[RMDB]
RNA sequence: GGGAACGACUCGAGUAGAGUCGAAAACAUGGUCACUUCCGAAGCGCUUUAGUGCCUUCCGUCCCUAAACCGCCAACAGCCAGAACGGCUUCUCCCCGCGGUUUGUCACUGAUCCGCAGGGCCCGGACACCUAUGAGGUUUUCGAACCUCAUAGGUGAAAAGAAACAACAACAACAAC
Reactivity to DMS in 0.01 (KOAc 150mM, MgCl2 10mM, bicine 150mM(pH8.5), 24C), signal-to-noise 2, nucleotides 027 to 126: c120a090u020g000g030u020c030a060c030u010u020c050c010g000a100a070g000c080g010c020u000u020u030a090g010u010g000c040c020u000u000c030c050g000u000c010c010c010u000a020a050a080c060c030g010c030c080a060a080c160a050g000c020c010a160g020a100a210c130g010g000c030u000u020c050u000c010c020c010c040g010c020g000g000u000u020u000g010u010c090a090c120u020g000a060u010c030c010g000c030a080g030g020g000c000c010c000g000g020a250
Reactivity to 2A3 in 0.01 (KOAc 150mM, MgCl2 10mM, bicine 150mM(pH8.5), 24C), signal-to-noise 4, nucleotides 027 to 126: c040a070u100g030g030u060c030a030c090u070u020c050c010g020a060a010g030c030g000c050u090u120u130a080g030u070g070c010c000u030u050c030c010g040u030c020c000c000u040a070a070a020c010c020g020c030c030a050a030c030a100g010c030c000a040g030a170a040c060g010g000c000u070u000c030u020c000c000c000c010g010c010g020g010u030u040u090g050u020c030a040c070u090g020a030u020c000c010g020c020a050g000g020g000c000c020c000g040g000a010

Source: RMDB libraries RFM100 and RFMREP, as collected in RNAgym.
Structure probing data (DMS and 2A3) for a 177-nucleotide construct.
The RNA was probed in 150 mM KOAc, 10 mM MgCl2 and 150 mM bicine (pH 8.5) at 24 C.
For DMS the reverse transcriptase was MarathonRT.